[RMDB]
RNA sequence: GGGAACGACUCGAGUAGAGUCGAAAAGCAACGCAAAGCCGCGGCAAGUGGAGUUAGCGAGCAGAGACUAGGCUUUGGUUUCUUCAAGUGAAGCGGUCACCAAUCAGGUGUGGUAGUUACCGUAAAAAUAACCGCUCUUUGUUCGCAAAGAGCGGAACUUGAAUAAAUCGUUCGCGAUUUAUUCAAGAAAAGAAACAACAACAACAAC
Reactivity to DMS in 0.01 (KOAc 150mM, MgCl2 10mM, bicine 150mM(pH8.5), 24C), signal-to-noise 2, nucleotides 027 to 156: g030c020a070a060c080g010c030a140a080a130g010c000c030g020c030g020g050c070a070a080g010u010g010g000a120g010u000u000a120g020c030g010a170g030c020a080g000a120g000a110c040u000a100g020g030c030u000u010u000g010g010u000u000u000c000u000u000c040a060a160g020u000g000a060a210g020c020g030g000u000c030a070c020c010a040a100u010c080a120g030g010u010g000u010g020g010u010a050g020u000u000a060c010c010g010u010a010a060a070a070a130u010a090a160c000c010g030c000u000c010u020u000u000g020u000u000c260g020c000a000a010a030g000a020g010c010g000g000a000a010
Reactivity to 2A3 in 0.01 (KOAc 150mM, MgCl2 10mM, bicine 150mM(pH8.5), 24C), signal-to-noise 3, nucleotides 027 to 156: g020c010a020a040c040g000c090a050a060a010g010c010c010g010c040g060g020c070a080a050g040u050g030g060a070g030u080u100a020g040c020g030a020g020c020a010g050a000g010a100c060u080a050g010g040c000u070u060u070g030g000u020u020u010c000u070u060c060a110a070g040u060g110a100a020g010c000g010g010u020c020a010c010c000a030a110u170c060a060g090g070u090g040u050g110g020u040a060g030u070u020a010c010c020g000u060a100a040a020a010a000u100a070a050c010c000g000c000u020c000u000u000u000g010u020u040c110g010c090a000a000a000g000a000g000c000g000g000a000a000
An RNA of 207 nucleotides, treated with DMS and 2A3 and read out base by base.
2A3 is a SHAPE reagent: it acylates the 2'-hydroxyl of flexible nucleotides of all four kinds.